[RMDB]
RNA sequence: GGGAACGACUCGAGUAGAGUCGAAAAUUAAACGCAACGACUCGAGUAGAGUCGAAAACAAUACGACUCGAGUAGAGUCGAAAACCCAACGACUCGAGUAGAGUCGAAGCGAACGCAAGCGAAAAAACACCUCUAUAGUGUUCGCACUAUAGAGGUGAAAAGAAACAACAACAACAAC
Reactivity to DMS in 0.01 (KOAc 150mM, MgCl2 10mM, bicine 150mM(pH8.5), 24C), signal-to-noise 1, nucleotides 027 to 126: u000u000a200a130a170c150g020c100a040a100c000g010a010c000u000c000g000a070g000u020a090g000a010g010u000c000g000a000a020a070a030c010a000a000u000a040c000g000a000c000u000c010g000a080g010u000a090g010a010g000u000c000g000a010a030a060a050c000c000c000a050a210c010g000a000c010u000c000g010a120g000u000a110g000a020g010u000c000g010a040a190g010c030g010a070a060c100g000c180a090a100g010c040g000a010a030a060a080a070a100
Reactivity to 2A3 in 0.01 (KOAc 150mM, MgCl2 10mM, bicine 150mM(pH8.5), 24C), signal-to-noise 2, nucleotides 027 to 126: u080u060a050a030a010c300g000c300a000a000c000g000a000c000u000c000g010a020g060u080a010g020a000g000u010c000g000a000a000a000a000c070a060a060u080a040c000g000a000c000u000c000g010a020g030u070a010g040a000g000u000c000g000a000a000a000a010c000c000c000a000a010c000g000a000c000u010c010g030a040g100u130a020g060a000g000u000c000g000a010a010g010c010g040a040a030c070g020c130a070a070g060c020g140a100a020a000a000a010a010